[RMDB]
RNA sequence: GGGAACGACUCGAGUAGAGUCGAAAACAGGCCUUGCGCAGACCUUCCUUGGAACCGAAAUGGUGGAUGACCAAUGCCGCGCUCACCCCCGCCGCUUCGGCGAUGGCUCGCAGCCCGACACCGAAUCCUUGGGCUUAUGAUUCGUCAUAAGCCCAAGAAAAGAAACAACAACAACAAC
Reactivity to DMS in 0.01 (KOAc 150mM, MgCl2 10mM, bicine 150mM(pH8.5), 24C), signal-to-noise 3, nucleotides 027 to 126: c150a070g020g000c020c030u010u000g020c050g040c110a060g010a090c060c030u010u000c060c030u000u000g010g000a160a130c050c020g000a040a030a060u010g020g050u000g000g000a100u000g010a130c050c080a050a100u000g010c090c030g040c100g010c060u000c070a110c030c030c040c060c020g000c050c030g050c080u000u000c020g000g040c040g010a090u000g010g020c020u000c090g010c080a140g010c020c010c000g010a110c120a130c070c030g000a040a090u010c100
Reactivity to 2A3 in 0.01 (KOAc 150mM, MgCl2 10mM, bicine 150mM(pH8.5), 24C), signal-to-noise 2, nucleotides 027 to 126: c020a000g070g000c000c010u160u060g010c060g020c010a030g030a200c020c000u050u040c030c010u060u100g050g060a090a050c030c010g020a060a050a080u130g000g000u030g030g040a100u080g050a030c000c030a090a040u120g030c040c050g000c010g000c040u040c040a080c010c030c050c010c010g000c020c010g040c030u030u090c010g000g000c020g080a060u070g030g010c010u000c030g040c030a000g000c040c000c030g020a040c030a020c040c010g030a060a000u080c010
This 177-nucleotide RNA was probed chemically with DMS and 2A3. The data come from the RNA Mapping Database (RMDB), library OK2TRN. The reactions ran in a buffer of 150 mM KOAc, 10 mM MgCl2 and 150 mM bicine (pH 8.5), at 24 C. The DMS profile rests on 2,688 reads.